[RMDB]
Record summary: Structure probing data (2A3 and DMS) for a 177-nucleotide construct. The RNA was probed in 150 mM KOAc, 10 mM MgCl2 and 150 mM bicine (pH 8.5) at 24 C.

RNA sequence: GGGAACGACUCGAGUAGAGUCGAAAACUUGUGGGGAAGGCACAAGUAGGACACCAACAUUACCUGCAAGCAAGACGCAAAAUUAAUAGAACAUCACCAUACUUGUGGCUUUCUUGCAAGUCGUGCACUCAUUAAUGCUCUUCGGAGCAUUAAUGAGAAAAGAAACAACAACAACAAC
Reactivity to 2A3 in 0.01 (KOAc 150mM, MgCl2 10mM, bicine 150mM(pH8.5), 24C), signal-to-noise 3, nucleotides 027 to 126: c000u010u000g000u000g000g010g010g000a000a000g060g000c000a010c010a020a000g000u010a000g020g020a020c020a020c100c020a030a040c020a060u030u110a060c000c040u030g010c040a040a080g060c020a050a030g090a070c060g020c050a020a120a090a130u130u130a040a120u080a120g100a060a030c030a090u100c030a010c020c030a040u010a020c000u010u000g010u020g100g050c000u010u000u000c000u000u010g010c000a000a000g000u010c010g080u130g060c030a030
Reactivity to DMS in 0.01 (KOAc 150mM, MgCl2 10mM, bicine 150mM(pH8.5), 24C), signal-to-noise 2, nucleotides 027 to 126: c000u000u000g000u020g010g000g000g010a010a000g000g000c010a000c020a010a010g020u020a000g000g000a150c120a110c100c020a050a050c110a050u000u000a110c120c040u000g000c030a120a110g000c090a150a080g000a160c130g000c060a080a030a110a060u000u010a140a150u000a090g020a080a040c110a080u020c060a040c060c020a120u000a020c010u000u000g060u000g010g000c000u000u000u000c000u010u000g000c000a000a000g010u000c050g010u000g010c160a210